Chemical mapping of a 177-nucleotide RNA with 2A3 and DMS.
Conditions: 150 mM KOAc, 10 mM MgCl2 and 150 mM bicine (pH 8.5), 24 C.
High 2A3 reactivity points to a flexible backbone, as in loops and unpaired stretches.
[RMDB]
RNA sequence: GGGAACGACUCGAGUAGAGUCGAAAACGCUGGCCGAGCGACAGGAACUCCAUCGGCAAUCGAACCAGCGCCACGCCCAGCAAAGCGACGCCGCUCGGCAACUGGAUAUGGAGCAGCAGCGCCAUGACAUCCGCUAAUAGUUCGCUAUUAGCGGAUGAAAAGAAACAACAACAACAAC
Reactivity to 2A3 in 0.01 (KOAc 150mM, MgCl2 10mM, bicine 150mM(pH8.5), 24C), signal-to-noise 3, nucleotides 027 to 126: c030g010c020u030g040g000c030c010g000a000g010c000g030a060c060a120g080g030a090a100c030u020c070c020a040u050c020g020g020c060a040a070u070c040g010a030a040c020c010a010g030c010g000c040c010a050c040g040c010c000c000a020g020c060a050a120a000g000c000g050a040c030g030c020c010g020c010u030c000g050g010c020a050a070c060u080g080g000a060u120a090u210g040g000a030g020c000a000g010c000a010g010c020g020c020c010a040u060g010a020
Reactivity to DMS in 0.01 (KOAc 150mM, MgCl2 10mM, bicine 150mM(pH8.5), 24C), signal-to-noise 4, nucleotides 027 to 126: c070g000c020u000g000g020c060c020g000a030g000c050g000a040c080a090g010g010a130a110c130u010c030c030a100u000c040g000g020c070a080a100u000c070g000a090a150c060c030a070g010c060g000c030c030a120c180g000c010c010c020a130g000c140a060a100a100g010c030g000a090c100g020c030c030g000c000u000c050g010g010c040a040a060c040u000g000g010a180u010a060u000g010g000a090g010c020a110g020c030a080g010c030g000c010c010a100u000g010a250